An RNA of 177 nucleotides, treated with DMS and 2A3 and read out base by base.
The DMS profile rests on 1,181 reads.
In probing experiments dimethyl sulfate is read out at A N1 and C N3, which are open when not base-paired.
DMS adducts were read by reverse transcription with MarathonRT.
The reactions ran in a buffer of 150 mM KOAc, 10 mM MgCl2 and 150 mM bicine (pH 8.5), at 24 C.
Reactivities are given for positions 27 through 126.
RNA sequence: GGGAACGACUCGAGUAGAGUCGAAAAACAAAUUAUCUAAGUCUAAGACCUUGUUUCAAACUAACAAGGGCGCAUCGAGGAAGACCAGACCUCCAUACUUAGACAAGCGCGAACCGGCCAAAAAAAAACUUAUACAAUGAUUCGUCAUUGUAUAAGUAAAAGAAACAACAACAACAAC
Reactivity to DMS in 0.01 (KOAc 150mM, MgCl2 10mM, bicine 150mM(pH8.5), 24C), signal-to-noise 2, nucleotides 027 to 126: a050c040a080a100a090u020u030a060u010c060u000a060a070g010u010c040u000a020a060g010a120c020c000u000u000g000u000u000u000c090a020a100a130c200u010a010a020c020a010a000g010g010g000c060g010c150a050u010c180g010a030g000g000a090a090g000a120c090c100a080g010a090c010c000u010c020c150a040u000a070c020u000u010a040g000a010c040a040a080g050c100g010c030g000a040a120c070c040g010g000c060c030a010a000a000a000a060a050a120a180
Reactivity to 2A3 in 0.01 (KOAc 150mM, MgCl2 10mM, bicine 150mM(pH8.5), 24C), signal-to-noise 2, nucleotides 027 to 126: a000c050a030a080a020u210u130a090u180c030u090a070a020g030u040c020u020a000a060g030a060c010c020u000u000g010u050u070u090c240a300a220a100c080u070a030a010c010a010a000g010g010g000c050g000c010a020u150c020g010a000g010g040a150a040g070a100c010c030a000g080a120c010c000u020c040c000a060u040a170c010u010u010a010g010a000c010a010a030g090c060g010c000g030a030a040c030c040g050g010c010c050a000a000a000a080a050a000a050a000